[RMDB]
RNA sequence: GGGAACGACUCGAGUAGAGUCGAAAAUCUGUGAGGGGUCACGGUUGUCGUGGGCGUCGUUGCCAUUAGAUGAACGUUAGACUAUGGUAAAUCUUUGAUAGUUUAUCAAAGUUAUUGGGCGAGCGAGCUAUAUUUAAAUUUUCGAAUUUAAAUAUAGAAAAGAAACAACAACAACAAC
Reactivity to DMS in 0.01 (KOAc 150mM, MgCl2 10mM, bicine 150mM(pH8.5), 24C), signal-to-noise 4, nucleotides 027 to 126: u020c040u010g020u020g020a060g000g000g010g000u010c000a050c050g000g020u000u010g010u010c030g010u010g010g000g000c000g000u000c060g000u020u010g000c030c030a100u020u040a060g010a080u020g010a080a060c080g000u030u020a120g000a070c030u010a070u010g000g010u010a030a070a070u040c020u020u020u000g000a060u010a060g010u030u030u010a030u000c010a010a030a030g000u010u020a040u030u000g000g000g010c030g010a090g000c070g010a070g010
Reactivity to 2A3 in 0.01 (KOAc 150mM, MgCl2 10mM, bicine 150mM(pH8.5), 24C), signal-to-noise 3, nucleotides 027 to 126: u050c030u030g040u080g040a020g000g050g010g000u040c000a000c020g000g000u000u060g020u010c020g020u020g010g000g000c000g000u000c010g010u000u040g010c000c000a040u040u140a040g090a110u070g100a070a020c050g020u030u090a050g010a060c020u040a060u070g010g020u020a030a080a110u070c020u020u030u050g040a040u060a100g110u100u140u060a010u000c000a010a000a010g000u020u040a070u100u070g020g030g010c020g020a020g030c050g020a010g010
The record gives the reactivity of an RNA of 177 nucleotides to DMS and 2A3. DMS adducts were read by reverse transcription with MarathonRT. The data come from the RNA Mapping Database (RMDB), library OK1LIB.